Conditions: 150 mM KOAc, 10 mM MgCl2 and 150 mM bicine (pH 8.5), 24 C. This 177-nucleotide RNA was probed chemically with 2A3 and DMS. For DMS, 798 sequencing reads were counted. The 2A3 profile rests on 1,142 reads. It was measured as part of the RMDB library RFMREP.
RNA sequence: GGGAACGACUCGAGUAGAGUCGAAAAUUUGCUCACUCAAGGGAAGUCUUGCUCAUCCCCUUCUGAAAGGGGGUGAUAAAAAUGACAGCAUAUGAAACAAUCUCUUUAAUGAUUGCUUUUGGCAUGCCAACUCCUGUUACUUCGGUAACAGGAGUUGAAAAGAAACAACAACAACAAC
Reactivity to 2A3 in 0.01 (KOAc 150mM, MgCl2 10mM, bicine 150mM(pH8.5), 24C), signal-to-noise 2, nucleotides 027 to 126: u070u050u120g040c000u020c020a020c000u070c050a100a040g010g010g010a050a030g020u000c020u020u040g010c000u000c010a000u000c000c000c010c000u050u060c110u250g260a150a030a030g000g000g000g040g000u000g000a000u050a000a110a010a000a020u100g010a000c010a030g000c010a040u020a020u200g040a040a030a000c000a000a020u000c010u080c030u190u190u280a210a120u220g020a030u050u000g000c040u000u010u040u070g040g020c040a000u020g040c020
Reactivity to DMS in 0.01 (KOAc 150mM, MgCl2 10mM, bicine 150mM(pH8.5), 24C), signal-to-noise 1, nucleotides 027 to 126: u000u000u000g000c050u010c000a090c050u020c050a100a080g000g000g010a120a060g010u010c000u000u000g030c300u010c000a010u000c000c000c000c000u000u000c300u000g000a090a060a010g000g000g020g020g060u010g000a010u010a010a060a110a070a080u020g010a030c100a080g010c000a010u000a060u010g000a040a020a030c010a000a030u000c030u000c300u000u010u020a100a060u000g000a020u000u000g000c100u000u000u000u000g000g020c130a010u000g010c070